[RMDB]
RNA sequence: GGGAACGACUCGAGUAGAGUCGAAAAGAUAUGGACCAGUUGUCAGAUGAUGAUUGUCAUCGAUCUUUAGUCGGAAACGACUAAAGGGAGACAAAUAUCAUCUUGGAUUUACUGGUCCUAAGUCAAAGCAUAUGCAGAGUUCGCUCUGCAUAUGCAACGAUUGUAUUCCCUUCGGGGAAUACAAUCGAAAAGAAACAACAACAACAAC
Reactivity to 2A3 in 0.01 (KOAc 150mM, MgCl2 10mM, bicine 150mM(pH8.5), 24C), signal-to-noise 4, nucleotides 027 to 156: g020a010u090a020u130g000g000a010c000c000a000g000u010u010g000u020c000a000g000a010u000g000a000u010g030a060u020u020g020u020c060a200u300c140g030a130u060c030u010u010u000a010g000u000c000g000g040a060a090a050c010g010a000c000u000a000a000a010g010g000g000a030g000a000c000a000a050a010u130a000u000c000a000u000c000u040u100g060g010a010u180u170u200a010c000u000g000g000u000c000c000u000a010a010g000u000c030a090a020a030g000c000a000u000a000u000g000c000a000g000a010g030u080u140c220g080c100u000c000u000g000c000a000u000a000u000g000c000a000a000
Reactivity to DMS in 0.01 (KOAc 150mM, MgCl2 10mM, bicine 150mM(pH8.5), 24C), signal-to-noise 1, nucleotides 027 to 156: g050a010u000a280u000g010g020a030c020c000a030g000u000u000g040u010c000a070g000a000u000g010a000u000g020a110u010u000g040u000c040a210u000c180g020a060u010c010u000u000u000a000g030u000c000g040g000a140a150a210c000g000a030c000u000a000a000a050g010g010g010a210g000a030c000a020a050a170u000a050u000c000a000u000c010u010u040g060g030a070u000u010u000a020c000u010g020g010u010c000c000u000a010a060g050u010c010a130a180a210g000c000a010u000a010u010g020c050a020g000a010g000u010u010c300g010c000u000c000u000g000c000a000u000a000u000g000c020a010a040